[RMDB]
RNA sequence: GGGAACGACUCGAGUAGAGUCGAAAAUGAAUGAGCUGGCCGCGGCUGAACCGGGUGAUCGUUUCGGCUUUGAUCUGAUCCGCGCCCGUUUGCCGCAUCACCUCGGCGCGUGUGCUGGCGAUGACCGUACUGAACUAAGUUUCGACUUAGUUCAGUAAAAAGAAACAACAACAACAAC
Reactivity to DMS in 0.01 (KOAc 150mM, MgCl2 10mM, bicine 150mM(pH8.5), 24C), signal-to-noise 9, nucleotides 027 to 126: u040g000a090a080u020g010a230g010c010u000g000g010c040c080g020c000g010g010c030u030g010a090a080c110c040g000g010g020u000g010a060u020c080g030u010u010u000c000g010g010c050u010u030u030g000a110u030c040u000g000a040u010c030c040g010c030g010c010c000c010g010u010u010u010g000c010c000g010c070a060u010c040a030c040c030u020c050g020g010c050g010c040g010u000g000u040g010c020u000g000g010c010g010a090u010g000a120c040c040g000
Reactivity to 2A3 in 0.01 (KOAc 150mM, MgCl2 10mM, bicine 150mM(pH8.5), 24C), signal-to-noise 9, nucleotides 027 to 126: u170g080a030a050u100g010a010g020c010u020g020g000c010c010g010c010g110g110c140u140g030a090a060c040c020g010g010g010u020g020a070u110c070g020u040u110u060c010g010g010c000u110u090u220g120a190u050c070u070g030a050u010c020c010g010c010g020c020c000c010g010u050u070u100g020c010c000g010c010a010u030c000a010c000c010u150c070g030g000c040g000c010g010u040g050u130g000c010u010g010g000c020g010a030u060g030a010c010c010g020
Structure probing data (DMS and 2A3) for a 177-nucleotide construct.
2A3 adducts were read by reverse transcription with SuperScript II with manganese.